Structure probing data (DMS and 2A3) for a 177-nucleotide construct. Reactivities are rounded to 0.1 and cut off at 0 and 3.

RNA sequence: GGGAACGACUCGAGUAGAGUCGAAAAGGGGGCGACAUUGGUGCUGUGGCAGCGACUGCGUCCAACAGAAGAGGUACUCGACCGGCUGGCGUGGCUGCUACUCGUCGUCGGUGGAUGUGGGGUCCUAUGAUAAAUAUCGGUUCGCCGAUAUUUAUCAAAAAGAAACAACAACAACAAC
Reactivity to DMS in 0.01 (KOAc 150mM, MgCl2 10mM, bicine 150mM(pH8.5), 24C), signal-to-noise 7, nucleotides 027 to 126: g010g000g000g010g020c070g010a050c070a110u010u010g010g020u000g010c090u000g020u000g010g020c020a030g020c030g010a110c110u010g000c030g010u010c030c040a050a100c080a120g010a090a170g010a070g000g010u010a080c110u000c050g010a150c060c030g000g000c060u010g010g000c020g020u000g010g010c040u000g010c050u000a030c020u000c050g010u000c030g000u000c030g000g000u000g000g000a070u000g010u000g010g000g010g010u000c040c050u000a110
Reactivity to 2A3 in 0.01 (KOAc 150mM, MgCl2 10mM, bicine 150mM(pH8.5), 24C), signal-to-noise 3, nucleotides 027 to 126: g000g000g000g020g010c010g010a020c020a060u080u190g060g000u080g030c050u050g010u050g030g010c010a010g000c020g080a080c070u120g000c020g040u070c010c020a040a030c030a060g130a160a010g050a060g120g050u100a080c030u030c110g080a040c010c010g050g000c070u060g020g000c000g010u020g060g010c040u040g020c000u050a060c000u020c030g040u010c010g000u000c010g010g030u030g000g030a100u100g060u110g030g000g010g010u020c000c010u100a140